[RMDB]
RNA sequence: GGGAACGACUCGAGUAGAGUCGAAAAAAAAAGAUAUGGAUCACCCUCGGAUAGCUUGCAUAUGACGCUCGGAAACGAGCGAGAACAUAUGAACUACAAGUGCGGAGAGGUGAUCCUAAGUCAAAAACAUUAUUGAAAGGUUCGCCUUUCAAUAAUGAAAAGAAACAACAACAACAAC
Reactivity to DMS in 0.01 (KOAc 150mM, MgCl2 10mM, bicine 150mM(pH8.5), 24C), signal-to-noise 5, nucleotides 027 to 126: a030a060a090a170a080g010a050u010a300u010g010g000a030u000c000a020c010c000c010u000c010g010g010a120u000a160g010c020u000u000g010c000a030u000a000u010g000a160c010g010c010u010c000g020g000a080a090a160c000g000a000g010c000g020a040g010a100a140c000a010u010a000u000g010a080a040c100u020a300c020a010a020g010u000g010c100g000g010a020g010a130g040g000u000g010a000u000c000c000u010a020a090g000u020c040a040a070a080a080a120
Reactivity to 2A3 in 0.01 (KOAc 150mM, MgCl2 10mM, bicine 150mM(pH8.5), 24C), signal-to-noise 2, nucleotides 027 to 126: a000a020a020a000a070g070a040u090a050u140g000g000a000u000c000a000c030c000c000u010c040g190g050a160u080a150g040c010u010u030g000c000a000u000a000u030g080a070c020g010c000u000c010g040g020a090a120a090c010g000a000g000c030g020a050g010a000a010c000a000u040a000u010g020a070a040c030u170a050c210a030a020g020u060g120c200g120g030a020g040a200g040g000u000g000a000u000c000c000u000a030a000g030u010c030a000a040a000a080a160

Source: RMDB library TTRDES, as collected in RNAgym.
An RNA of 177 nucleotides, treated with DMS and 2A3 and read out base by base.
DMS (dimethyl sulfate) methylates the pairing face of unpaired adenines and cytosines.
2A3 adducts were read by reverse transcription with SuperScript II with manganese.
The reactions ran in a buffer of 150 mM KOAc, 10 mM MgCl2 and 150 mM bicine (pH 8.5), at 24 C.